Structure probing data (2A3 and DMS) for a 177-nucleotide construct.
The RNA was probed in 150 mM KOAc, 10 mM MgCl2 and 150 mM bicine (pH 8.5) at 24 C.
For 2A3 the reverse transcriptase was SuperScript II with manganese.

RNA sequence: GGGAACGACUCGAGUAGAGUCGAAAAAAGCCAUGAUGAGGGCAUUGGUUGGUGUAACCUUUGAAACGCUCCCAUGCUUCACAGAAGCUUUCACCAGUCUUCUGUGAGAAACCAGAAAUCUCAUUUCAUUGAUUAGGAUUUUCGAAUCCUAAUCAAUAAAAGAAACAACAACAACAAC
Reactivity to 2A3 in 0.01 (KOAc 150mM, MgCl2 10mM, bicine 150mM(pH8.5), 24C), signal-to-noise 9, nucleotides 027 to 126: a000a000g080c050c010a070u110g010a030u040g010a050g020g010g000c020a020u020u070g050g010u040u080g020g040u060g040u110a090a130c020c000u050u040u140g180a140a100a010c050g010c020u020c000c000c000a020u070g030c020u050u030c000a000c000a000g000a000a000g000c000u040u130u130c140a140c080c020a050g050u070c010u000u000c000u000g000u010g000a010g020a030a020a010c030c010a010g100a040a080a040u060c040u020c050a070u010u080u070c030
Reactivity to DMS in 0.01 (KOAc 150mM, MgCl2 10mM, bicine 150mM(pH8.5), 24C), signal-to-noise 9, nucleotides 027 to 126: a080a040g010c030c030a050u010g010a050u010g010a030g020g000g010c010a100u010u000g010g000u000u000g000g010u000g010u010a080a080c080c100u000u020u020g010a090a110a090c100g000c030u000c020c030c010a110u040g000c090u010u000c000a010c000a000g000a020a010g000c040u000u010u010c280a110c250c150a050g000u030c000u000u000c000u000g010u000g000a020g010a050a050a070c060c050a070g010a060a040a070u020c050u010c030a060u010u000u010c120

The data come from the RNA Mapping Database (RMDB), libraries RFM100 and RFMREP.